This 170-nucleotide RNA was probed chemically with DMS and 2A3. Reactivities are given for positions 27 through 129. The reactions ran in a buffer of 150 mM KOAc, 10 mM MgCl2 and 150 mM bicine (pH 8.5), at 24 C. The DMS profile rests on 12,980 reads. The data come from the RNA Mapping Database (RMDB), library 15KLIB.
RNA sequence: GGGAACGACUCGAGUAGAGUCGAAAAAAUAUUGGAUUGGAUAUGGGUGCAAUUGUGACUCGCUUAGGCAAGCAGCACUGCCCCAAUCUAAAGAUUCCAAUUUUUUAAACGAGUCCGGGGUUCUAUUCAAGUUGGAGGUUCGCCUCCAACAAAAGAAACAACAACAACAAC
Reactivity to DMS in 0.01 (KOAc 150mM, MgCl2 10mM, bicine 150mM(pH8.5), 24C), signal-to-noise 4, nucleotides 027 to 129: a100a000u020a000u050u010g000g000a070u040u020g030g030a080u020a140u000g000g000g010u070g050c020a050a070u000u050g040u000g040a080c030u020c140g080c050u020u000a160g070g040c150a010a000g030c110a140g010c000a020c060u010g000c060c010c010c000a030a070u000c000u030a020a010a020g040a000u010u000c010c000a010a020u010u000u010u000u030u000a050a100a070c090g000a100g030u040c000c070g030g020g000g020u000u000c000u060a110u050u020c100a050a110
Reactivity to 2A3 in 0.01 (KOAc 150mM, MgCl2 10mM, bicine 150mM(pH8.5), 24C), signal-to-noise 5, nucleotides 027 to 129: a000a000u210a020u030u000g010g010a010u020u040g000g000a020u050a300u160g020g010g020u250g000c050a110a140u130u100g000u030g090a230c000u060c140g000c030u040u000a100g230g020c060a040a010g010c010a000g010c020a000c020u000g000c000c010c000c000a000a000u010c000u030a080a050a030g150a050u050u000c000c000a000a000u010u000u000u000u000u050a080a140a030c050g010a000g040u000c030c010g000g000g000g030u070u030c050u040a090u060u100c040a030a060